[RMDB]
RNA sequence: GGGAACGACUCGAGUAGAGUCGAAAAUAAAUAUAACUGCAAAUAACAAAAAUUCUUACGCAUUAGCUGCUUAAUUUAGCGCAUGCGUUGCUCUUGACCAGUUUACUCGUGACUGGUUUUCGAGUAUCAACUUUAGCGAGUUACGUUUAACUACCUCACAGAAUUGAAACUUCGGUUUCAAUUCUGUAAAAGAAACAACAACAACAAC
Reactivity to 2A3 in 0.01 (KOAc 150mM, MgCl2 10mM, bicine 150mM(pH8.5), 24C), signal-to-noise 1, nucleotides 027 to 156: u000a000a050a040u100a010u080a080a140c070u130g030c060a050a180a100u170a130a080c130a060a190a080a040a090u200u190c110u200u170a000c000g000c000a000u070u030a080g020c120u200g020c050u210u100a070a170u300u290u190a040g020c000g000c000a010u000g030c000g000u010u060g000c000u000c000u060u010g000a010c000c000a000g000u000u000u030a040c010u010c000g000u000g000a000c000u000g000g000u000u000u090u000c000g000a000g000u040a060u210c010a000a100c040u050u200u220a000g010c000g010a020g010u000u060a030c100g000u020u050u020a040a000c000u040a090c000c060u100c010
About this RNA: Source: RMDB library RSTRND, as collected in RNAgym. Structure probing data (2A3) for a 207-nucleotide construct. The 2A3 profile rests on 658 reads.